The record gives the reactivity of an RNA of 177 nucleotides to 2A3 and DMS. 2A3 adducts were read by reverse transcription with SuperScript II with manganese. Conditions: 150 mM KOAc, 10 mM MgCl2 and 150 mM bicine (pH 8.5), 24 C. Values cover nucleotides 27 to 126. The data come from the RNA Mapping Database (RMDB), libraries RFM100 and RFMREP.
RNA sequence: GGGAACGACUCGAGUAGAGUCGAAAAAGGCAUGCAAGUCGAGCGAGAAUCUGUUGAAUGAUCCUUCGGGUGAAUGAUUCAGAGGACAGCGGCAAACGGGGUAGUAAUGCAUAGGUAUGUACCCUCUUAGAUGCAUAUCAUUCGUGAUAUGCAUCUAAAAAGAAACAACAACAACAAC
Reactivity to 2A3 in 0.01 (KOAc 150mM, MgCl2 10mM, bicine 150mM(pH8.5), 24C), signal-to-noise 7, nucleotides 027 to 126: a000g050g010c040a020u040g010c030a070a060g030u060c040g060a030g060c030g030a170g030a130a030u010c010u000g010u010u010g040a030a060u020g010a010u010c020c000u050u050c150g090g000g010u020g020a030a020u030g020a030u020u010c000a000g000a010g030g010a000c020a020g020c010g020g000c020a040a060a060c080g010g010g010g020u040a030g060u040a100a110u050g040c050a050u080a100g090g060u090a040u120g060u040a040c000c010c000u010c030u010
Reactivity to DMS in 0.01 (KOAc 150mM, MgCl2 10mM, bicine 150mM(pH8.5), 24C), signal-to-noise 6, nucleotides 027 to 126: a040g000g010c050a030u010g010c070a060a090g010u010c060g010a140g030c030g020a040g000a300a180u000c010u010g010u020u000g010a250a030u000g000a150u000c000c000u000u030c180g020g020g020u000g000a130a030u000g000a240u000u000c010a040g000a030g000g010a250c170a060g000c010g010g000c070a060a080a090c110g000g010g010g010u000a080g000u010a060a090u010g000c040a080u020a060g020g000u010a030u000g000u000a090c020c000c020u010c140u000